Chemical mapping of a 177-nucleotide RNA with 2A3 and DMS.
It was measured as part of the RMDB library OK2TRN.
[RMDB]
RNA sequence: GGGAACGACUCGAGUAGAGUCGAAAACAAGCUCACUAUUGAAUCCACGCCGUUCAAUGUCGCAGAGGGGAAGGAGGUUCUUCUACUCGCCCACAACCUGCCCCAGAAUCGUAUUGGUUACAGCUGGACGUAUUAGCCAUUUCGAUGGCUAAUACGUAAAAGAAACAACAACAACAAC
Reactivity to 2A3 in 0.01 (KOAc 150mM, MgCl2 10mM, bicine 150mM(pH8.5), 24C), signal-to-noise 3, nucleotides 027 to 126: c020a030a020g040c000u030c020a050c050u110a120u130u160g080a040a050u080c040c020a040c140g000c020c000g040u030u030c040a080a060u090g100u190c040g000c070a020g010a050g060g000g000g000a000a040g100g060a030g020g070u120u040c020u070u020c010u040a080c000u000c050g000c000c030c000a070c010a030a050c010c010u040g010c010c010c020c000a020g120a030a040u080c050g010u060a090u050u140g090g020u120u060a030c020a040g020c020u030g020g030
Reactivity to DMS in 0.01 (KOAc 150mM, MgCl2 10mM, bicine 150mM(pH8.5), 24C), signal-to-noise 4, nucleotides 027 to 126: c120a120a130g000c050u000c030a060c090u000a060u000u010g010a150a080u010c030c010a090c120g020c040c030g010u000u010c060a020a060u000g000u010c060g030c100a090g010a170g020g000g000g000a040a050g000g020a110g000g010u020u010c060u000u000c040u010a070c050u000c060g000c090c020c030a080c140a080a080c040c020u000g000c030c010c000c010a070g000a090a080u000c040g020u010a080u000u010g010g010u000u000a060c100a090g000c020u000g000g000